[RMDB]
RNA sequence: GGGAACGACUCGAGUAGAGUCGAAAAAAUAUCUUUCAGGAAGUAAACACAUCAGGAGCGAUAGCGGUGAAUUAUUCGUGGUUUUGUCGAUUCGGCAUAGUGGCGAUAACUGAAUGCCGGAUCGGUAUGCUACGUUAGCUUUCGAGCUAACGUAGCAAAAAGAAACAACAACAACAAC
Reactivity to DMS in 0.01 (KOAc 150mM, MgCl2 10mM, bicine 150mM(pH8.5), 24C), signal-to-noise 2, nucleotides 027 to 126: a040a060u020a160u000c020u000u010u030c080a050g010g000a080a100g010u010a050a110a070c070a040c140a030u030c090a050g000g030a080g000c080g010a040u000a060g010c030g000g060u040g010a070a070u010u020a050u010u040c110g000u000g000g000u000u010u000u040g000u010c010g000a020u000u000c000g010g000c000a020u000a090g010u090g000g010c100g020a110u010a070a030c030u000g010a160a050u000g010c000c000g020g000a010u000c010g000g000u040a020
Reactivity to 2A3 in 0.01 (KOAc 150mM, MgCl2 10mM, bicine 150mM(pH8.5), 24C), signal-to-noise 2, nucleotides 027 to 126: a000a050u200a000u050c060u010u130u050c010a000g160g040a010a030g050u110a070a080a000c120a020c000a090u060c000a050g030g020a010g030c010g050a030u080a040g080c110g000g060u080g030a050a050u100u040a090u030u240c030g020u080g090g030u000u010u010u010g080u050c000g000a000u040u000c000g000g000c000a000u000a040g080u070g030g090c180g060a070u150a190a010c030u060g120a150a000u000g030c010c010g030g000a000u000c010g000g000u000a000